[RMDB]
RNA sequence: GGGAACGACUCGAGUAGAGUCGAAAAGAACUCACCAGCAAAUGUUUACGACAAGAUUCGACAUUUGCAAAUUACGUAGCGAUCUUCCAGAAUCUUGUCGAAACGUUGCCAAUCGCUACGCCCUAAAAUUUAUGUUCGGAUUCGUCCGAACAUAAAUAAAAGAAACAACAACAACAAC
Reactivity to 2A3 in 0.01 (KOAc 150mM, MgCl2 10mM, bicine 150mM(pH8.5), 24C), signal-to-noise 3, nucleotides 027 to 126: g020a060a040c020u020c070a060c030c010a010g010c020a010a050a100u090g040u070u140u140a130c020g000a000c000a020a000g000a020u010u020c020g040a020c090a150u100u130u170g030c020a040a050a000u170u070a030c040g000u020a020g000c010g010a010u020c030u220u050c140c030a030g020a030a010u000c000u010u010g030u000c010g020a020a000a010c040g010u010u010g040c010c020a030a050u040c000g000c000u040a030c020g050c020c000c010u140a170a190a040
Reactivity to DMS in 0.01 (KOAc 150mM, MgCl2 10mM, bicine 150mM(pH8.5), 24C), signal-to-noise 3, nucleotides 027 to 126: g010a120a140c090u000c050a070c160c090a160g010c020a020a040a020u010g010u000u000u000a180c020g010a030c000a000a020g010a010u000u000c000g020a130c300a090u000u000u000g010c090a060a070a120u010u000a070c130g020u000a060g010c010g000a020u010c100u010u000c120c130a170g010a020a000u000c000u020u000g020u000c020g040a020a020a040c030g000u000u000g000c010c100a090a040u000c040g010c030u000a040c050g000c010c020c020u000a030a050a080